[RMDB]
RNA sequence: GGGAACGACUCGAGUAGAGUCGAAAAGGCAAAUGUUACCGGGGUCACCUGAUCAUCAAAUCGCUGAGUUGCAGCAAUCUACGUUUUUAAAUACCGGUCAGUGGUUAGAAGAUGAUACAGCUGCAAACCCCACUCAUAAUUUCGAUUAUGAGUGGGGAAAAGAAACAACAACAACAAC
Reactivity to 2A3 in 0.01 (KOAc 150mM, MgCl2 10mM, bicine 150mM(pH8.5), 24C), signal-to-noise 2, nucleotides 027 to 126: g070g010c020a030a080a110u090g000u110u090a090c010c010g000g000g000g040u090c000a020c010c010u010g040a040u040c010a000u010c030a010a090a040u040c030g000c030u050g030a030g070u100u050g000c020a010g000c020a060a050u060c020u040a040c080g020u010u010u010u040u170a100a140a030u120a090c000c010g040g040u040c020a040g040u070g100g040u030u000a080g020a220a040g020a060u020g010a020u030a120c050a040g000c000u020g020c000a000a040a190
Reactivity to DMS in 0.01 (KOAc 150mM, MgCl2 10mM, bicine 150mM(pH8.5), 24C), signal-to-noise 3, nucleotides 027 to 126: g000g000c060a090a060a120u010g010u000u010a030c020c040g000g000g000g020u010c120a060c100c000u000g000a080u010c030a030u000c070a050a080a030u010c080g000c040u010g010a090g010u020u000g050c040a030g000c020a060a050u010c050u010a080c080g020u010u010u000u000u010a020a090a150u000a080c020c010g010g000u010c110a080g000u010g000g000u000u000a110g010a050a100g010a030u010g010a050u000a060c300a060g000c040u000g000c040a010a050a180